[RMDB]
Description: An RNA of 177 nucleotides, treated with 2A3 and DMS and read out base by base. For DMS, 2,146 sequencing reads were counted.
RNA sequence: GGGAACGACUCGAGUAGAGUCGAAAAGGGGCACAGGCAGUCUGGGCUGCAGCCUCAGAGCGGAGCAGAGCCCGGGGUGUAAGAGGCCGGCUGGGGCAAGUGGGCACCAGGAGAGCCCAGGCUGGCCCACGGGCCCUGAUUUCGAUCAGGGCCCGUGAAAAGAAACAACAACAACAAC
Reactivity to 2A3 in 0.01 (KOAc 150mM, MgCl2 10mM, bicine 150mM(pH8.5), 24C), signal-to-noise 2, nucleotides 027 to 126: g020g000g020g000c060a060c040a100g080g000c000a030g050u040c010u020g010g020g050c000u090g000c060a020g000c020c000u030c010a010g010a000g070c050g020g010a070g050c070a060g030a010g110c050c000c010g000g000g000g020u080g010u030a140a080g000a040g020g000c020c030g060g000c010u040g040g000g000g000c050a050a100g090u210g060g100g010c030a030c050c020a020g030g040a110g030a010g000c030c000c000a000g000g000c000u010g030g050c000c020
Reactivity to DMS in 0.01 (KOAc 150mM, MgCl2 10mM, bicine 150mM(pH8.5), 24C), signal-to-noise 2, nucleotides 027 to 126: g000g040g000g040c050a130c160a090g040g000c060a020g020u020c020u010g000g000g030c010u000g010c090a170g070c030c000u000c020a050g000a230g000c040g000g000a150g020c130a120g000a170g020c050c010c050g000g020g010g050u010g000u000a150a090g010a070g000g020c010c000g020g020c010u000g000g050g010g000c060a080a050g040u010g000g000g010c010a070c020c030a100g000g010a110g000a050g030c030c010c000a060g000g000c000u000g000g000c000c000
For DMS the reverse transcriptase was MarathonRT.